[RMDB]
RNA sequence: GGGAACGACUCGAGUAGAGUCGAAAAUAUCAAUAAAUCAACGUUUUUCAACUUAUGAAAUGCUUGAUUUUCAUUAAAAAUGAUAUGGUUUCCUGCCACAAAUCCCUGUCAAGAUGAUGCUUGACGGUGGUUAAUCUACCUUCGGGUAGAUUAACCAAAAAGAAACAACAACAACAAC
Reactivity to DMS in 0.01 (KOAc 150mM, MgCl2 10mM, bicine 150mM(pH8.5), 24C), signal-to-noise 3, nucleotides 027 to 126: u010a000u000c000a030a070u010a010a010a010u000c000a000a010c140g000u000u010u000u010u010c010a070a280c260u050u040a100u030g010a000a010a020u000g020c060u020u000g000a000u000u000u000u000c180a220u020u080a010a090a100a100a070u000g000a000u000a000u000g000g020u010u000u010c000c000u000g020c120c100a060c110a030a030a060u040c040c030c040u000g000u000c030a010a000g000a180u010g000a160u060g000c020u000u000g010a010c000g000g020
Reactivity to 2A3 in 0.01 (KOAc 150mM, MgCl2 10mM, bicine 150mM(pH8.5), 24C), signal-to-noise 4, nucleotides 027 to 126: u000a000u000c010a000a080u020a050a050a000u000c000a020a010c100g000u000u000u020u010u020c050a070a060c090u250u160a130u270g020a000a010a000u030g010c010u000u000g020a020u020u010u040u040c030a050u080u250a060a050a030a040a120u070g000a000u000a010u020g040g000u040u020u020c020c000u020g060c040c000a060c070a020a080a020u070c010c030c030u070g000u000c000a010a000g000a030u290g020a030u140g120c000u000u000g000a010c000g020g000
Background:
Conditions: 150 mM KOAc, 10 mM MgCl2 and 150 mM bicine (pH 8.5), 24 C. An RNA of 177 nucleotides, treated with DMS and 2A3 and read out base by base. Values cover nucleotides 27 to 126. 2A3 adducts were read by reverse transcription with SuperScript II with manganese. For DMS, 3,363 sequencing reads were counted. For 2A3, 1,899 sequencing reads were counted. It was measured as part of the RMDB library RFM100.